Structure probing data (2A3 and DMS) for a 177-nucleotide construct. High DMS reactivity at an A or C suggests that its Watson-Crick edge is free. Reactivities are rounded to 0.1 and cut off at 0 and 3. The RNA was probed in 150 mM KOAc, 10 mM MgCl2 and 150 mM bicine (pH 8.5) at 24 C. It was measured as part of the RMDB library OK2TST.

RNA sequence: GGGAACGACUCGAGUAGAGUCGAAAAAGUCAACCAAGAUGCAGCGGACAAGCUCAACGUAUUCGCCAAUCGCAACGAAGCGAGCCCCCGAGCACGUGAAGCUGUGAUGGAGGUGGUGAAUGAAGUAUACUGAUCAUGGAUUCGUCCAUGAUCAGUAAAAAGAAACAACAACAACAAC
Reactivity to 2A3 in 0.01 (KOAc 150mM, MgCl2 10mM, bicine 150mM(pH8.5), 24C), signal-to-noise 2, nucleotides 027 to 126: a010g040u000c020a050a020c000c000a000a000g030a040u090g000c000a000g000c000g030g020a040c040a060a040g030c010u010c020a020a050c080g100u070a170u060u040c000g000c000c010a040a060u000c000g020c070a100a100c200g090a090a020g010c000g010a020g010c010c000c000c010c030g000a010g010c030a040c070g110u220g090a000a010g030c020u010g000u030g020a000u040g010g030a010g030g040u040g010g060u060g030a060a100u120g010a050a000g050u070a030
Reactivity to DMS in 0.01 (KOAc 150mM, MgCl2 10mM, bicine 150mM(pH8.5), 24C), signal-to-noise 5, nucleotides 027 to 126: a090g010u010c060a150a090c010c000a040a300g000a050u000g010c010a050g010c020g010g020a120c130a100a210g010c020u000c040a140a110c140g030u010a080u000u000c020g010c000c020a100a050u010c070g000c160a090a070c110g000a150a100g000c030g020a040g010c020c040c020c070c110g010a060g000c030a050c180g030u010g000a180a120g010c040u000g020u000g020a050u010g030g010a300g000g000u010g010g000u000g000a050a060u000g010a060a050g010u010a060